[RMDB]
Conditions: 150 mM KOAc, 10 mM MgCl2 and 150 mM bicine (pH 8.5), 24 C.
Chemical mapping of a 177-nucleotide RNA with DMS.
The data come from the RNA Mapping Database (RMDB), library TTRDEL.

RNA sequence: GGGAACGACUCGAGUAGAGUCGAAAAGAUAUGGACAGUAUAUCAAGAGUGGGUCGGAAACGACCCAAACUCUGACCACGUACGUCCUAAGUCAAAACACUAACGUUCCUUCGGGAACGUUAGUGAAUCCCUGCAUGCUGUUCGCAGCAUGCAGGGAAAAAGAAACAACAACAACAAC
Reactivity to DMS in 0.01 (KOAc 150mM, MgCl2 10mM, bicine 150mM(pH8.5), 24C), signal-to-noise 1, nucleotides 027 to 126: g030a020u000a300u000g000g000a010c000a200g020u000a000u000a060u000c010a130a020g010a020g050u000g000g000g000u010c000g010g000a100a080a150c010g000a010c000c000c000a060a020a070c020u000c020u000g000a080c300c210a030c180g000u000a000c020g020u010c000c000u000a020a110g020u000c050a050a040a140a180c020a000c000u010a000a000c000g000u000u020c000c000u010u020c300g030g020g060a020a000c000g010u020u000a010g030u020g000a090a110